[RMDB]
An RNA of 177 nucleotides, treated with 2A3 and DMS and read out base by base.
The reactions ran in a buffer of 150 mM KOAc, 10 mM MgCl2 and 150 mM bicine (pH 8.5), at 24 C.
The data come from the RNA Mapping Database (RMDB), library OK2TRN.
RNA sequence: GGGAACGACUCGAGUAGAGUCGAAAACUCAGCUCUUCUGGGGGCUGAGGCGAUAGGAUGGCUUGAGCCCAGGAAUUCAGGGCUGGAGCAAACUAUGAUUGCACCACUGCACUCCAUCCAGCCUGGGUCGAGAACUAAGAUUCGUCUUAGUUCUCGAAAAAGAAACAACAACAACAAC
Reactivity to 2A3 in 0.01 (KOAc 150mM, MgCl2 10mM, bicine 150mM(pH8.5), 24C), signal-to-noise 3, nucleotides 027 to 126: c010u010c010a020g010c010u020c010u180u080c140u280g180g010g000g000g000c000u020g000a000g010g030c010g030a030u090a080g050g020a040u050g050g020c040u040u080g090a020g000c020c010c020a040g080g130a190a170u270u200c090a070g040g000g000c020u000g020g000a030g020c040a030a050a020c080u100a070u300g090a150u070u120g010c020a020c030c040a080c100u080g000c040a010c020u000c010c000a030u000c010c010a010g030c000c010u050g030g040g010
Reactivity to DMS in 0.01 (KOAc 150mM, MgCl2 10mM, bicine 150mM(pH8.5), 24C), signal-to-noise 7, nucleotides 027 to 126: c000u000c010a000g010c010u000c010u000u010c230u010g020g010g010g000g000c000u000g000a010g010g020c120g010a110u000a060g010g010a130u000g010g010c090u000u000g010a070g010c010c000c000a110g010g000a150a150u010u000c140a100g000g010g020c030u000g010g000a030g020c040a030a040a130c120u000a070u000g010a110u000u000g020c070a100c090c110a090c180u010g000c060a050c050u000c030c030a050u000c020c010a090g010c030c010u010g010g020g010
Description
In probing experiments dimethyl sulfate is read out at A N1 and C N3, which are open when not base-paired.